Description:
The record gives the reactivity of an RNA of 177 nucleotides to DMS and 2A3. The data come from the RNA Mapping Database (RMDB), library M2PK50.

[RMDB]
RNA sequence: GGGAACGACUCGAGUAGAGUCGAAAACACUUGGAGUUCGCUCCAAGUGAAACCAUUGCCGAUUGGCAAUAAUACCGCAGGCCGUAAAGCGGAACAAAUAAGAAAGCGAAGACUUCGGUCUUCGCAAGACAUAUUCACAGUUCGCUGUGAAUAUGUCAAAAGAAACAACAACAACAAC
Reactivity to DMS in 0.01 (KOAc 150mM, MgCl2 10mM, bicine 150mM(pH8.5), 24C), signal-to-noise 4, nucleotides 027 to 126: c010a010c000u000u000g000g010a020g000u000u020c240g040c000u010c000c000a010a010g000u000g010a030a090a110c040c060a050u010u000g000c000c010g010a180u020u030g020g010c000a020a010u000a100a140u010a060c020c020g000c030a110g000g020c090c100g010u000a040a090a100g010c020g010g000a150a100c200a050a070a090u030a090a090g020a120a130a140g010c000g010a010a020g000a000c010u000u010c120g030g000u000c000u000u000c000g010c000a000a010
Reactivity to 2A3 in 0.01 (KOAc 150mM, MgCl2 10mM, bicine 150mM(pH8.5), 24C), signal-to-noise 7, nucleotides 027 to 126: c000a000c000u000u000g010g000a010g010u060u070c100g120c100u000c000c000a000a000g000u000g000a020a000a000c010c000a020u000u010g010c010c050g300a300u160u300g010g000c000a000a010u100a030a020u050a040c010c010g010c050a020g100g080c060c040g130u150a140a060a020g030c000g020g020a030a060c050a050a110a060u290a120a060g160a210a060a000g000c010g000a000a000g000a000c000u020u100c280g060g000u000c000u000u000c000g000c000a000a000